[RMDB]
RNA sequence: GGGAACGACUCGAGUAGAGUCGAAAACCGAGGUGCCUAGCGCGUCAGUAAUCCUCGAUGACCCCAACCUGUUGUUCGUCAACGCUGGCAUGGUCCAGUUCGUGCCGUUCUUUCUGGGGCAGUGUAAACCAUGCAUGAGGUUCGCCUCAUGCAUGGUAAAAGAAACAACAACAACAAC
Reactivity to 2A3 in 0.01 (KOAc 150mM, MgCl2 10mM, bicine 150mM(pH8.5), 24C), signal-to-noise 1, nucleotides 027 to 126: c050c000g010a060g070g030u080g040c020c030u060a110g030c100g010c020g220u110c050a000g000u090a000a090u100c000c030u000c000g090a170u060g100a130c000c010c000c000a050a070c000c050u140g030u180u120g030u020u080c030g030u020c040a050a080c060g030c050u000g000g000c110a220u270g050g020u080c000c010a000g000u050u030c030g000u010g040c030c000g000u020u000c060u070u170u090c040u080g000g000g000g000c030a110g000u000g020u150a120a080
Reactivity to DMS in 0.01 (KOAc 150mM, MgCl2 10mM, bicine 150mM(pH8.5), 24C), signal-to-noise 3, nucleotides 027 to 126: c050c040g020a030g030g010u010g020c130c070u000a070g010c090g010c060g000u010c050a090g030u000a090a110u000c020c010u010c030g020a060u000g000a140c050c010c010c020a050a090c090c100u000g030u010u000g010u010u000c100g000u020c060a100a070c090g000c010u000g010g000c010a170u020g010g010u000c020c010a030g010u020u010c070g020u000g010c080c010g000u010u000c030u000u000u000c100u000g000g010g000g030c090a060g030u010g000u000a080a080
This 177-nucleotide RNA was probed chemically with 2A3 and DMS. For 2A3, 740 sequencing reads were counted.